[RMDB]
RNA sequence: GGGAACGACUCGAGUAGAGUCGAAAAGGAGUAGAAGUCAGGUCCACGCUUCAGAGUGAAGGUUCUCAGACAAUUGCAUGGGAAACCCAGCGAAUGCUGGAUUAUGCUCUCUGUCAGAACACCUGGGACCGUUGAUCCGAUUCGUCGGAUCAACGGUAAAAGAAACAACAACAACAAC
Reactivity to DMS in 0.01 (KOAc 150mM, MgCl2 10mM, bicine 150mM(pH8.5), 24C), signal-to-noise 2, nucleotides 027 to 126: g000g060a090g060u040a040g000a100a090g000u030c070a080g000g000u000c020c100a130c150g000c000u020u000c060a120g010a150g030u060g000a080a000g010g000u010u000c010u000c090a150g060a040c050a040a060u000u000g000c020a000u000g020g000g020a120a060a100c140c000c000a020g020c010g000a170a020u070g020c010u000g000g000a060u040u010a010u000g000c020u000c030u000c150u000g000u000c000a110g000a040a050c070a000c010c000u030g000g010g000
Reactivity to 2A3 in 0.01 (KOAc 150mM, MgCl2 10mM, bicine 150mM(pH8.5), 24C), signal-to-noise 3, nucleotides 027 to 126: g040g020a030g030u120a050g040a140a000g070u130c040a010g000g000u000c010c030a070c080g030c000u020u020c030a060g120a110g130u180g040a060a010g060g020u060u000c060u070c130a080g000a030c010a010a060u060u020g000c020a000u000g000g000g210a050a040a060c000c000c000a030g000c050g120a210a140u300g030c010u030g000g040a010u090u050a000u050g000c010u000c000u030c030u000g000u010c020a030g000a030a030c020a030c030c010u040g000g010g060
Conditions: 150 mM KOAc, 10 mM MgCl2 and 150 mM bicine (pH 8.5), 24 C. An RNA of 177 nucleotides, treated with DMS and 2A3 and read out base by base. 2A3 is a SHAPE reagent: it acylates the 2'-hydroxyl of flexible nucleotides of all four kinds. 2A3 adducts were read by reverse transcription with SuperScript II with manganese.